The data come from the RNA Mapping Database (RMDB), library OK2TST. The record gives the reactivity of an RNA of 177 nucleotides to 2A3 and DMS. The reactions ran in a buffer of 150 mM KOAc, 10 mM MgCl2 and 150 mM bicine (pH 8.5), at 24 C. DMS adducts were read by reverse transcription with MarathonRT. 2A3 adducts were read by reverse transcription with SuperScript II with manganese. The DMS profile rests on 1,454 reads. 2A3 is a SHAPE reagent: it acylates the 2'-hydroxyl of flexible nucleotides of all four kinds.
RNA sequence: GGGAACGACUCGAGUAGAGUCGAAAAUUGCUGUCACGACAUUGGCAUUGGGCUAUUAUUUAGUCAGUAUUAGUUUCCCUGCUUUGGUCUGGCGCAGCUGAUAGCAUUCGCCCUGAUGGAUGAUAAACUACCACGAGACUUUCGAGUCUCGUGGUAGAAAAGAAACAACAACAACAAC
Reactivity to 2A3 in 0.01 (KOAc 150mM, MgCl2 10mM, bicine 150mM(pH8.5), 24C), signal-to-noise 1, nucleotides 027 to 126: u070u050g000c030u020g050u000c040a060c110g070a050c070a090u080u000g020g000c010a000u030u140g040g000g040c040u050a000u120u000a100u020u170u020a070g080u150c040a020g040u000a100u100u050a030g080u000u070u090c000c000c000u010g000c000u070u100u160g040g000u000c000u040g010g000c100g000c030a000g000c030u050g080a050u060a040g060c010a010u050u050c050g000c000c000c010u080g060a150u090g010g080a060u190g020a020u300a120a070a040
Reactivity to DMS in 0.01 (KOAc 150mM, MgCl2 10mM, bicine 150mM(pH8.5), 24C), signal-to-noise 2, nucleotides 027 to 126: u010u010g020c010u010g050u000c040a120c160g020a050c060a090u000u020g000g030c010a160u000u010g010g010g000c020u000a010u000u000a030u000u010u000a130g010u000c170a070g010u000a030u000u000a070g020u000u000u010c020c030c170u000g010c020u000u030u000g040g000u000c020u000g000g030c130g020c070a050g010c050u000g000a110u000a040g100c020a040u000u000c010g020c000c020c000u010g000a070u010g010g000a020u030g010a110u010a020a100a170